[RMDB]
An RNA of 207 nucleotides, treated with 2A3 and DMS and read out base by base. Source: RMDB library OK3TST, as collected in RNAgym. Conditions: 150 mM KOAc, 10 mM MgCl2 and 150 mM bicine (pH 8.5), 24 C. DMS adducts were read by reverse transcription with MarathonRT.
RNA sequence: GGGAACGACUCGAGUAGAGUCGAAAAACCAUAGUGGUAAAUUCUCGGAAUUAGUAAUGAUGCAUUUGGAAAAAACAUUCCCUAGUUUAGCCAUCAAAUACAGUGAAGAAAGCAAAGAUAAAAGUAAAUCAAAGUUCGCGGGAUCGCUCACAUUGGGGUUAAGCAAAGAGUUCGCUCUUUGCUUAACAAAAGAAACAACAACAACAAC
Reactivity to 2A3 in 0.01 (KOAc 150mM, MgCl2 10mM, bicine 150mM(pH8.5), 24C), signal-to-noise 4, nucleotides 027 to 156: a000c020c000a040u110a040g060u040g020g020u040a120a100a120u070u000c030u020c000g020g020a100a080u090u060a110g060u080a100a080u080g020a010u040g010c040a070u030u080u140g030g050a050a060a020a000a030a010c040a060u040u040c000c020c000u010a050g030u040u090u100a020g010c020c000a020u030c020a040a040a080u140a070c040a020g060u030g160a060a020g060a120a130a020g050c060a090a070a060g030a070u150a120a110a020a000g080u080a050a070a040u050c030a100a030a040g020u020u040c040g000c020g170g020g000a020u060c030g000c040u070c010a030c000a030u050u040g020g000g020
Reactivity to DMS in 0.01 (KOAc 150mM, MgCl2 10mM, bicine 150mM(pH8.5), 24C), signal-to-noise 2, nucleotides 027 to 156: a060c010c000a090u000a140g040u010g020g040u010a090a060a090u010u010c030u000c030g010g010a070a060u010u010a110g000u000a070a160u010g010a120u000g010c000a150u000u000u030g020g010a000a040a060a040a030a040c040a120u000u000c030c040c000u010a060g010u010u000u000a080g000c060c040a060u010c010a010a040a080u010a040c000a120g020u010g010a110a130g010a110a090a110g010c000a080a020a090g000a140u000a040a090a080a100g000u000a030a060a060u000c010a080a100a130g010u000u000c070g020c000g030g030g010a070u000c020g040c110u010c040a020c020a140u000u000g000g010g010